[RMDB]
Structure probing data (DMS and 2A3) for a 177-nucleotide construct. It was measured as part of the RMDB library OK2TST.
RNA sequence: GGGAACGACUCGAGUAGAGUCGAAAAGCGCUGUUUGGCUAUCCAGAAAUAUUGGAUGAGCAAGCUUAAAAGAUUCAUUCGUAUGCCCCUAAGCUUACUUCUUAAAUUAUCGUCGAUUGCGCGGAUGUCUCCAAAGUCUAUUCGUAGACUUUGGAGAAAAAGAAACAACAACAACAAC
Reactivity to DMS in 0.01 (KOAc 150mM, MgCl2 10mM, bicine 150mM(pH8.5), 24C), signal-to-noise 4, nucleotides 027 to 126: g010c050g030c020u000g010u000u000u010g040g020c020u010a040u000c010c010a030g000a130a100a170u010a110u020u000g000g010a030u010g010a030g000c030a020a020g000c000u000u000a020a050a090a090g010a070u010u010c090a110u010u000c110g010u010a080u010g000c020c010c010c100u000a020a030g000c020u000u000a040c030u000u000c090u010u000a050a060a100u010u010a080u010c080g020u000c010g000a040u000u000g020c020g020c010g000g000a120u010g000
Reactivity to 2A3 in 0.01 (KOAc 150mM, MgCl2 10mM, bicine 150mM(pH8.5), 24C), signal-to-noise 2, nucleotides 027 to 126: g020c030g020c080u030g100u170u060u200g080g000c010u020a030u000c000c000a030g150a060a250a010u270a060u190u080g020g020a020u030g030a030g010c030a020a000g010c000u020u050a050a060a050a090g080a130u190u130c090a080u120u040c100g080u200a080u240g100c030c000c000c000u040a040a000g000c000u000u020a030c010u010u130c020u080u100a110a240a180u160u120a120u170c000g010u010c000g030a030u010u030g000c000g000c070g000g090a030u070g060
For 2A3 the reverse transcriptase was SuperScript II with manganese.
The DMS profile rests on 3,940 reads.
Values cover nucleotides 27 to 126.
DMS adducts were read by reverse transcription with MarathonRT.